[RMDB]
RNA sequence: GGGAACGACUCGAGUAGAGUCGAAAAGAGCGCAUCGUGACGUUUGGCAACGAGUGGUGCAUCGCCUCGCGGCUGGACAUGCACAACGGACACUUCGGCCUCUCGCCUCUGCAGGUGUGGAUGGCCAGAGCGAGGGUAAUUUCGAUUACCCUCGCUCAAAAGAAACAACAACAACAAC
Reactivity to DMS in 0.01 (KOAc 150mM, MgCl2 10mM, bicine 150mM(pH8.5), 24C), signal-to-noise 6, nucleotides 027 to 126: g000a080g030c050g000c040a040u030c060g000u020g000a090c070g010u000u000u020g000g010c060a060a080c080g000a160g010u010g020g010u000g000c040a040u010c090g000c030c000u000c100g020c300g000g020c040u000g000g010a040c070a060u020g000c050a030c060a130a070c060g000g000a150c160a060c100u010u020c090g000g010c010c010u000c000u000c020g000c020c000u010c170u020g000c200a070g020g010u000g000u020g000g010a050u030g010g010c010c040a060
Reactivity to 2A3 in 0.01 (KOAc 150mM, MgCl2 10mM, bicine 150mM(pH8.5), 24C), signal-to-noise 9, nucleotides 027 to 126: g070a020g010c060g000c040a060u080c090g070u060g080a120c030g030u060u080u090g060g020c050a060a030c050g030a040g040u080g030g020u060g040c030a050u090c070g030c010c010u030c030g050c030g050g020c030u060g020g030a040c020a060u110g010c020a020c010a090a060c040g050g050a030c020a010c090u130u140c090g010g000c000c000u000c000u000c010g000c000c010u060c110u220g100c220a040g000g010u050g030u140g050g070a150u220g030g000c010c010a010
Chemical mapping of a 177-nucleotide RNA with DMS and 2A3.
DMS adducts were read by reverse transcription with MarathonRT.
For DMS, 16,304 sequencing reads were counted.